[RMDB]
RNA sequence: GGGAACGACUCGAGUAGAGUCGAAAAGAUUGAUCAGUCAUUGCGUCAAGGGAGCCCAAGAGCUCAAGGACUGCAAUCCAAGGUGCGCGGUGAUGCGAGGACCCAGAUUCAUCGUUGGAGGCGGUGACAGUACAUGCUUUUUCGAAAGCAUGUACUGAAAAGAAACAACAACAACAAC
Reactivity to DMS in 0.01 (KOAc 150mM, MgCl2 10mM, bicine 150mM(pH8.5), 24C), signal-to-noise 7, nucleotides 027 to 126: g010a110u010u000g010a120u010c020a210g010u000c040a060u000u000g000c070g010u000c050a100a160g010g000g000a050g020c020c020c100a130a150g010a130g020c020u000c030a090a080g010g000a030c030u010g000c110a040a100u000c020c070a120a090g020g010u000g010c050g020c030g000g020u000g000a050u000g010c060g000a100g000g010a140c010c010c020a120g000a130u010u000c030a010u000c020g010u000u010g010g010a120g000g010c010g000g010u000g000a070
Reactivity to 2A3 in 0.01 (KOAc 150mM, MgCl2 10mM, bicine 150mM(pH8.5), 24C), signal-to-noise 4, nucleotides 027 to 126: g040a060u100u190g030a050u090c020a010g020u000c020a020u020u120g030c030g030u030c030a060a110g160g020g010a020g030c000c000c040a130a050g050a050g010c020u020c030a030a040g060g000a030c030u120g000c060a020a020u000c030c020a040a060g090g020u130g010c020g000c030g030g030u060g020a040u080g030c060g010a030g000g040a040c000c000c020a010g020a050u020u030c000a010u020c020g030u050u070g090g050a050g070g000c010g000g000u010g010a020
This 177-nucleotide RNA was probed chemically with DMS and 2A3. The 2A3 profile rests on 8,204 reads.